[RMDB]
RNA sequence: GGGAACGACUCGAGUAGAGUCGAAAAGGGGUUAUGUAGGCAAUCUUGCUACUAAUCACGAUCGUUAUUGCUCUGUCCAUCAAGGAGCUCAUGUGGCUUCUAAUGAUGCAAUAAUGACUCGUUGUUUGAGACGUAUCCUUCGGGAUACGUAAAAGAAACAACAACAACAAC
Reactivity to DMS in 0.01 (KOAc 150mM, MgCl2 10mM, bicine 150mM(pH8.5), 24C), signal-to-noise 4, nucleotides 027 to 129: g050g050g000g020u000u000a050u000g040u030a000g000g040c060a020a030u040c100u040u030g040c040u040a000c070u040a010a010u050c150a030c030g000a120u010c030g020u060u000a000u000u000g020c020u020c100u050g040u040c170c120a140u040c140a030a010g040g000a000g020c030u020c060a080u000g060u040g040g010c010u040u020c000u020a080a030u020g010a100u000g000c010a000a020u010a040a030u000g010a000c050u010c030g000u000u000g030u030u030u020g000a120g010
Reactivity to 2A3 in 0.01 (KOAc 150mM, MgCl2 10mM, bicine 150mM(pH8.5), 24C), signal-to-noise 9, nucleotides 027 to 129: g060g020g000g000u060u040a070u220g020u030a010g120g010c040a040a100u090c150u110u180g040c020u060a100c020u050a040a050u050c060a010c100g030a040u000c000g000u000u000a010u000u000g010c020u020c090u140g150u110c090c000a060u060c040a060a040g010g000a000g010c020u010c030a190u300g170u300g020g010c000u020u000c000u020a050a070u080g010a020u130g010c000a000a000u000a000a000u010g030a020c080u010c030g010u010u060g020u010u020u060g080a080g020